[RMDB]
RNA sequence: GGGAACGACUCGAGUAGAGUCGAAAAAAUGGAAAAUCCUUGCUGCUGGAUCCUCCCAGUAAUAUCCGCGAUUACCCUAAAUGUAAAACUGUUCAUCAUAUUCAAGGUCAAAACCCUCAUGCACAGGAUCCAUGACGAUAUUCGUAUCGUCAUGGAUAAAAGAAACAACAACAACAAC
Reactivity to 2A3 in 0.01 (KOAc 150mM, MgCl2 10mM, bicine 150mM(pH8.5), 24C), signal-to-noise 3, nucleotides 027 to 126: a000a020u270g030g090a060a150a010a050u070c030c000u030u020g030c050u000g000c000u030g010g000a070u020c000c000u000c030c030c020a000g000u020a000a060u050a010u100c000c030g000c020g080a030u020u080a100c000c000c000u110a170a130a000u130g120u090a030a040a050a100c000u000g070u090u070c090a130u040c080a030u050a030u170u130c050a040a040g060g030u020c010a000a000a040a090c030c000c000u000c020a020u070g010c030a030c020a030g060g000
Reactivity to DMS in 0.01 (KOAc 150mM, MgCl2 10mM, bicine 150mM(pH8.5), 24C), signal-to-noise 2, nucleotides 027 to 126: a090a070u030g010g010a070a050a080a050u000c000c000u020u030g000c060u000g020c020u020g000g000a110u010c000c030u010c000c000c040a070g010u010a040a050u000a110u000c060c030g000c020g050a090u000u010a060c010c030c000u010a020a040a070u010g000u010a030a030a090a050c060u010g010u020u010c060a030u000c120a080u070a090u050u000c110a020a000g020g010u020c050a030a100a050a090c020c020c020u010c100a030u000g040c020a110c010a090g030g000